[RMDB]
RNA sequence: GGGAACGACUCGAGUAGAGUCGAAAAAAACCCGAAGUGCAUGUCGUGAGGGUAGCCAAUCACGUAAAUCCAAAGCUGCAAAUUAUCAGUUGCCAAUGAUGACAACUACGGUGCUCAACUAGCUGCGUAAGUAGCUUUUUGUUACACCAUCUAGCGGGCCUAAGAAUAAGUUCGCUUAUUCUUAGGCAAAAGAAACAACAACAACAAC
Reactivity to DMS in 0.01 (KOAc 150mM, MgCl2 10mM, bicine 150mM(pH8.5), 24C), signal-to-noise 3, nucleotides 027 to 156: a030a040a080c010c000c000g030a080a110g010u000g020c040a070u000g020u000c040g010u000g020a110g000g000g030u000a120g030c010c020a180a190u000c080a050c030g010u000a040a050a040u010c040c020a070a090a150g010c010u000g010c040a060a090a080u000u000a090u010c070a090g010u010u000g010c010c020a070a140u010g000a180u000g010a060c010a020a020c010u010a080c050g020g010u000g010c010u000c010a000a010c030u000a020g020c000u010g020c000g020u000a130a160g040u000a010g020c000u000u000u000u000u000g020u000u010a030c010a010c000c000a050u010c050u000a050g000c030g000g010
Reactivity to 2A3 in 0.01 (KOAc 150mM, MgCl2 10mM, bicine 150mM(pH8.5), 24C), signal-to-noise 4, nucleotides 027 to 156: a000a000a000c040c000c000g020a150a040g120u160g110c120a130u100g080u160c010g010u020g010a030g000g040g000u040a010g020c030c090a020a050u080c010a010c050g130u100a040a010a090u060c040c030a080a070a080g010c040u020g030c040a090a040a140u150u110a080u150c060a010g020u030u050g050c030c040a120a140u170g090a080u090g020a140c010a000a010c030u120a050c110g010g000u000g000c030u010c020a000a000c000u010a000g010c010u020g010c000g050u090a070a170g000u000a010g030c000u000u000u010u030u000g010u000u030a020c000a000c010c010a030u060c050u080a010g110c040g050g100